[RMDB]
RNA sequence: GGGAACGACUCGAGUAGAGUCGAAAAGAUGGUUGGGCUUGGUGGGCUAAUUUCUGACUUGCCCUAUCCAAGCUUAGAGUUGGAUCAUGUGGCCCAAUUGAAGAAAUGGACUACUUGAUUCGUAAAGUGGGGCGGAAUGCGUGAGGCUGGUUUCACAGUUUUGUGUAUCGUUCGCGAUACACAAAACAAAAGAAACAACAACAACAAC
Reactivity to 2A3 in 0.01 (KOAc 150mM, MgCl2 10mM, bicine 150mM(pH8.5), 24C), signal-to-noise 1, nucleotides 027 to 156: g080a050u090g030g050u010u070g010g000g050c000u000u000g040g010u000g000g030g040c050u150a150a150u070u170u060c080u240g120a190c110u090u050g000c000c000c000u000a080u000c010c010a000a010g010c000u000u000a000g000a030g020u070u070g000g000a010u000c010a010u010g000u020g010g010c020c010c000a050a110u100u160g090a140a070g010a110a000a040u010g000g000a030c000u000a000c000u040u080g010a020u050u000c000g020u050a040a040a040g030u080g000g010g030g020c040g030g070a090a010u070g030c020g010u030g010a020g000g090c070u050g060g000u000u040u040c170a210c030a050

Description:
An RNA of 207 nucleotides, treated with 2A3 and read out base by base. The RNA was probed in 150 mM KOAc, 10 mM MgCl2 and 150 mM bicine (pH 8.5) at 24 C. Source: RMDB library ARCHII, as collected in RNAgym.